This 177-nucleotide RNA was probed chemically with DMS and 2A3. Source: RMDB library OK1LIB, as collected in RNAgym. For 2A3, 9,343 sequencing reads were counted. The reactions ran in a buffer of 150 mM KOAc, 10 mM MgCl2 and 150 mM bicine (pH 8.5), at 24 C. The DMS profile rests on 6,441 reads.
RNA sequence: GGGAACGACUCGAGUAGAGUCGAAAAGACGCUGAUGCGAUCGACUGUAAGAUAGAUACAUUGAGCAGACAGAUACGUACGGCAAGUAUCGUCGCCAGAAGUACAGUCGCAAAUUGCCGUACGAAGAGGAUUAAUGAUCCUUCGGGAUCAUUAAUCCAAAAGAAACAACAACAACAAC
Reactivity to DMS in 0.01 (KOAc 150mM, MgCl2 10mM, bicine 150mM(pH8.5), 24C), signal-to-noise 4, nucleotides 027 to 126: g010a100c070g010c070u000g000a050u030g020c030g030a170u010c030g020a050c020u000g000u020a060a120g040a060u010a090g020a140u090a050c130a140u040u020g040a080g000c000a060g030a060c060a060g000a110u020a030c010g000u010a000c020g000g000c000a020a040g000u010a020u000c030g030u020c010g020c030c120a070g000a090a140g030u010a060c030a020g000u010c020g010c110a040a020a090u020u000g000c000c000g000u000a060c070g020a080a060g020a140
Reactivity to 2A3 in 0.01 (KOAc 150mM, MgCl2 10mM, bicine 150mM(pH8.5), 24C), signal-to-noise 8, nucleotides 027 to 126: g060a010c030g030c060u160g030a090u250g040c010g060a040u040c000g010a020c000u010g010u050a080a050g050a200u140a060g060a050u160a080c060a080u100u240g050a020g050c080a050g040a100c020a020g100a060u110a100c010g020u010a000c000g000g010c010a020a000g020u020a020u040c030g020u010c010g020c030c040a060g050a130a010g080u040a030c020a010g000u010c000g010c040a050a070a070u030u010g000c000c000g010u010a010c030g000a050a010g090a040